[RMDB]
RNA sequence: GGGAACGACUCGAGUAGAGUCGAAAAGUAGAGGCUCUGCCUUCGAAACACCAUCGAUCGUCCCUUCUUCUUUACCUUCUCCUGGCUCUUCCGAUGAGACGCGACCGGUGGCAUCACCUCUCGGUUCGUCCCAACCUGCUUUUUGUCUAUCUGAGCCCUAUGCGGAUUACUUCGGUAAUCCGCAUAGAAAAGAAACAACAACAACAAC
Reactivity to 2A3 in 0.01 (KOAc 150mM, MgCl2 10mM, bicine 150mM(pH8.5), 24C), signal-to-noise 1, nucleotides 027 to 156: g120u110a020g010a050g080g010c050u050c090u240g070c010c000u070u090c020g040a070a070a000c050a080c020c040a070u080c020g050a060u040c000g010u000c040c030c000u080u040c110u060u060c040u030u170u160a100c070c010u100u070c020u000c060c020u010g060g000c010u030c050u160u060c040c030g100a110u080g040a030g010a020c050g000c050g040a020c000c010g050g000u010g010g060c060a080u110c030a030c000c030u000c020u070c020g010g020u020u010c000g020u040c020c010c010a050a050c010c020u030g040c010u100u090u080u070u110g080u020c050u050a110u000c010u020g010a050g020c000c010
The record gives the reactivity of an RNA of 207 nucleotides to 2A3. For 2A3, 973 sequencing reads were counted. Source: RMDB library VIROID, as collected in RNAgym.